[RMDB]
RNA sequence: GGGAACGACUCGAGUAGAGUCGAAAACAACACUGCCAGCAUUAUACACUAUAGGCAGGGAAGAGGGCAAGAUUGUCUAGAACCAGGGAUUCUCAAACAUGUUCCCUUGGGAAUCAGUAUUGAGAUACACUGGUAGGGAUUUCGAUCCCUACCAGUGAAAAGAAACAACAACAACAAC
Reactivity to 2A3 in 0.01 (KOAc 150mM, MgCl2 10mM, bicine 150mM(pH8.5), 24C), signal-to-noise 2, nucleotides 027 to 126: c000a010a020c050a000c060u010g020c020c010a040g040c000a040u110u080a090u220a140c070a020c070u090a050u130a250g030g000c010a020g070g000g000a100a010g030a070g020g010g000c020a000a110g070a300u130u090g050u030c020u050a030g050a120a010c010c020a030g090g000g010a040u040u010c010u010c000a060a070a070c030a120u150g000u000u030c000c000c000u030u120g030g000g030a000a000u050c000a010g030u010a180u070u120g020a100g010a070u030a080
Reactivity to DMS in 0.01 (KOAc 150mM, MgCl2 10mM, bicine 150mM(pH8.5), 24C), signal-to-noise 3, nucleotides 027 to 126: c100a100a070c080a140c030u000g010c000c010a040g030c060a100u000u000a130u010a070c180a080c080u000a100u010a120g000g010c020a030g030g000g000a070a060g020a140g020g020g020c040a050a100g020a100u000u010g000u000c050u000a070g000a080a090c060c060a090g000g010g010a080u000u000c000u000c010a030a010a080c200a090u010g010u000u000c010c000c010u000u020g010g000g000a010a000u010c070a100g000u010a100u000u010g010a090g030a140u000a080

The record gives the reactivity of an RNA of 177 nucleotides to 2A3 and DMS. The data come from the RNA Mapping Database (RMDB), library OK2TST. Values cover nucleotides 27 to 126. DMS adducts were read by reverse transcription with MarathonRT. For DMS, 2,266 sequencing reads were counted. The reactions ran in a buffer of 150 mM KOAc, 10 mM MgCl2 and 150 mM bicine (pH 8.5), at 24 C.